[RMDB]
RNA sequence: GGGAACGACUCGAGUAGAGUCGAAAAGUACGAAAAUGGCUUAAUGCUUCAGUCCUUCGGGCAAUGAAGCCCUUCGAAGCUCGCAAGGCGGACAAGGUUAGUAGCGAAGCGCACUAUAGCGACGGCCUAAUGCUAGCCUAUUCGUAGGCUAGCAUUAAAAAGAAACAACAACAACAAC
Reactivity to DMS in 0.01 (KOAc 150mM, MgCl2 10mM, bicine 150mM(pH8.5), 24C), signal-to-noise 8, nucleotides 027 to 126: g010u020a060c090g000a040a100a090a110u020g000g020c010u010u030a060a140u050g020c000u000u000c100a070g000u020c030c000u010u010c090g010g010g000c080a140a080u030g010a090a120g000c110c010c010u010u000c050g010a300a160g010c010u000c030g030c250a110a300g000g000c040g000g000a300c300a020a020g010g010u020u020a070g010u000a070g000c030g000a070a070g000c090g010c080a030c030u000a050u010a050g000c020g010a150c140g000g000c050c020
Reactivity to 2A3 in 0.01 (KOAc 150mM, MgCl2 10mM, bicine 150mM(pH8.5), 24C), signal-to-noise 7, nucleotides 027 to 126: g050u060a060c060g070a020a050a000a080u130g050g000c020u090u070a080a010u260g010c010u020u050c050a050g020u070c010c000u020u050c050g030g020g040c070a040a110u150g050a090a030g010c000c000c010u000u020c020g020a030a000g000c010u000c030g080c020a030a050g010g000c000g020g000a010c000a020a000g030g050u110u080a030g040u090a020g120c020g040a040a000g050c020g030c080a020c030u080a040u080a120g020c010g030a020c010g050g010c000c000
This 177-nucleotide RNA was probed chemically with DMS and 2A3. The RNA was probed in 150 mM KOAc, 10 mM MgCl2 and 150 mM bicine (pH 8.5) at 24 C. The data come from the RNA Mapping Database (RMDB), libraries RFM100 and RFMREP. Reactivities are given for positions 27 through 126. DMS adducts were read by reverse transcription with MarathonRT.